[RMDB]
RNA sequence: GGGAACGACUCGAGUAGAGUCGAAAAACCUCAGUCUUCGGACUGAGGUGAGCGGAGCAUGGUGGCCGUGGGAACUCCUCCUUGGUGACAAGGGCCCACGCGGUGCGGCACGCUUCGGCGUGCCGAACGACGGGCCAUGUUUCGACAUGGCCCGUCGAAAAGAAACAACAACAACAAC
Reactivity to DMS in 0.01 (KOAc 150mM, MgCl2 10mM, bicine 150mM(pH8.5), 24C), signal-to-noise 2, nucleotides 027 to 126: a020c000c010u000c000a000g010u000c000u000u030c250g010g010a000c000u020g010a010g020g020u010g000a040g000c080g000g010a040g020c070a040u000g010g040u000g010g030c060c030g040u000g010g000g010a130a070c060u020c010c040u010c000c010u000u000g040g010u030g000a190c020a010a000g010g000g010c000c010c010a040c020g010c040g010g020u010g000c000g010g020c000a010c000g010c000u000u030c130g000g010c010g040u000g030c000c010g010a020a030
Reactivity to 2A3 in 0.01 (KOAc 150mM, MgCl2 10mM, bicine 150mM(pH8.5), 24C), signal-to-noise 1, nucleotides 027 to 126: a000c000c000u030c020a020g000u000c000u010u120c180g150g000a010c020u010g010a000g000g000u000g000a020g030c090g010g000a010g010c140a110u110g090g030u080g140g000c000c010g010u010g000g020g000a040a060c040u030c010c000u060c010c000u030u040g010g040u100g020a020c010a030a030g020g000g010c010c020c000a070c010g010c020g010g000u040g050c020g010g000c010a000c000g030c000u050u010c150g080g000c020g000u050g010c010c000g010a010a020
An RNA of 177 nucleotides, treated with DMS and 2A3 and read out base by base.
For 2A3, 1,854 sequencing reads were counted.
The DMS profile rests on 2,292 reads.
2A3 is a SHAPE reagent: it acylates the 2'-hydroxyl of flexible nucleotides of all four kinds.